[RMDB]
About this RNA
Chemical mapping of a 177-nucleotide RNA with DMS and 2A3.

RNA sequence: GGGAACGACUCGAGUAGAGUCGAAAAAUAAAUAAGGAAAGGGUGGAAUAAAAGUAUCUCAUCAGGUAUAUUUAAAUUACACGGUAGUUAAGGAGGUAACGAUAAGUUGAGUAAUUUUAACAUCAUGGAUCACAUAAUUCUUCGGAAUUAUGUGAUCAAAAGAAACAACAACAACAAC
Reactivity to DMS in 0.01 (KOAc 150mM, MgCl2 10mM, bicine 150mM(pH8.5), 24C), signal-to-noise 2, nucleotides 027 to 126: a090u010a040a080a150u020a170a140g020g000a080a050a070g000g000g040u000g010g010a100a080u000a070a090a060a210g000u000a060u000c000u010c090a050u010c090a040g010g010u020a020u010a040u000u000u000a020a090a020u020u010a050c090a010c100g010g020u000a040g030u010u030a030a120g000g000a040g020g000u000a020a050c080g000a100u000a040a030g010u010u020g010a040g000u040a040a090u010u030u020u020a040a080c090a050u000c180a090u000g020
Reactivity to 2A3 in 0.01 (KOAc 150mM, MgCl2 10mM, bicine 150mM(pH8.5), 24C), signal-to-noise 2, nucleotides 027 to 126: a000u070a000a010a030u110a040a060g040g040a040a050a000g090g040g010u060g000g030a010a010u100a060a160a030a050g010u000a030u030c020u020c020a100u050c040a010g100g000u020a130u000a030u030u150u070a070a090a020u060u030a050c070a000c070g060g030u040a060g010u070u060a010a050g010g030a040g010g030u010a010a010c000g010a060u050a190a050g020u030u010g000a000g040u020a080a190u000u100u100u060a060a020c010a020u120c010a010u170g090
2A3 adducts were read by reverse transcription with SuperScript II with manganese.
Values cover nucleotides 27 to 126.